[RMDB]
RNA sequence: GGGAACGACUCGAGUAGAGUCGAAAAGAAGCACUGGGAGCGAUUCAGGAGGUAACAAAUGAAUUGAAGUACUACCAGAAAAGGGCCGUGCAAAGCGGUCCAGCGAACCAUGCAGGCCGUAACGCGCUCGCAGGUAGAUAUUCGUAUCUACCUGCGAAAAAGAAACAACAACAACAAC
Reactivity to DMS in 0.01 (KOAc 150mM, MgCl2 10mM, bicine 150mM(pH8.5), 24C), signal-to-noise 3, nucleotides 027 to 126: g010a080a150g020c040a190c000u020g000g000g000a070g030c020g000a000u000u010c000a000g000g000a300g000g010u040a100a110c010a020a290a150u000g010a050a010u000u010g010a100a120g000u010a170c040u010a090c010c020a010g030a040a130a210a050g020g000g000c010c000g000u020g000c270a010a090a150g010c010g000g000u020c010c000a080g000c010g000a030a140c060c070a130u020g030c050a070g000g000c060c010g000u010a080a130c100g000c090g050c110
Reactivity to 2A3 in 0.01 (KOAc 150mM, MgCl2 10mM, bicine 150mM(pH8.5), 24C), signal-to-noise 3, nucleotides 027 to 126: g150a040a020g020c000a000c030u000g020g000g020a030g020c010g000a000u000u020c000a010g000g050a000g050g050u210a140a040c010a010a020a090u060g010a010a010u000u020g010a050a020g050u110a020c030u040a060c000c000a010g020a010a040a000a020g030g000g000c000c030g010u040g010c100a160a170a000g020c010g010g000u000c000c000a000g000c000g020a020a030c010c000a080u210g020c040a020g010g000c000c010g070u120a080a070c030g040c000g020c040
The data come from the RNA Mapping Database (RMDB), libraries RFM100 and RFMREP. An RNA of 177 nucleotides, treated with DMS and 2A3 and read out base by base. For 2A3 the reverse transcriptase was SuperScript II with manganese. DMS (dimethyl sulfate) methylates the pairing face of unpaired adenines and cytosines.